[RMDB]
RNA sequence: GGGAACGACUCGAGUAGAGUCGAAAAAGGCAUGAACAAUGGGAAACACGCAGCCACCACGAGUAGUGACAUGCCAUUGCUGCAUGCCUGUGCGGGCUGUCUGCAGGCAUGGGACCCAGUUAGGGUCGGUACGUAGCCGUUUCGACGGCUACGUACCAAAAGAAACAACAACAACAAC
Reactivity to 2A3 in 0.01 (KOAc 150mM, MgCl2 10mM, bicine 150mM(pH8.5), 24C), signal-to-noise 2, nucleotides 027 to 126: a030g020g020c010a020u070g020a190a030c050a110a120u180g170g070g070a050a140a010c070a000c000g020c000a000g000c020c010a000c020c020a110c100g080a010g060u230a020g010u020g040a040c010a020u030g010c000c010a030u050u180g060c050u080g000c010a000u040g000c000c000u020g000u020g050c080g040g030g010c020u030g000u110c070u080g010c000a000g000g050c000a010u000g010g040g010a000c010c020c050a030g080u100u180a080g030g020g020u010c000
Reactivity to DMS in 0.01 (KOAc 150mM, MgCl2 10mM, bicine 150mM(pH8.5), 24C), signal-to-noise 1, nucleotides 027 to 126: a070g000g000c000a020u010g020a190a020c090a090a070u000g000g000g000a120a180a110c100a090c080g020c060a050g000c020c000a180c110c040a070c060g000a100g000u000a140g010u000g000a180c060a060u000g020c000c000a110u000u000g050c080u000g010c000a010u000g020c000c000u010g000u000g000c110g010g000g020c020u010g040u010c060u000g010c030a030g000g000c000a000u000g000g000g000a040c000c000c000a220g000u010u000a120g000g010g000u000c040
Description:
Chemical mapping of a 177-nucleotide RNA with 2A3 and DMS. Reactivities are rounded to 0.1 and cut off at 0 and 3. The reactions ran in a buffer of 150 mM KOAc, 10 mM MgCl2 and 150 mM bicine (pH 8.5), at 24 C. 2A3 adducts were read by reverse transcription with SuperScript II with manganese. It was measured as part of the RMDB library OK2TST. DMS adducts were read by reverse transcription with MarathonRT.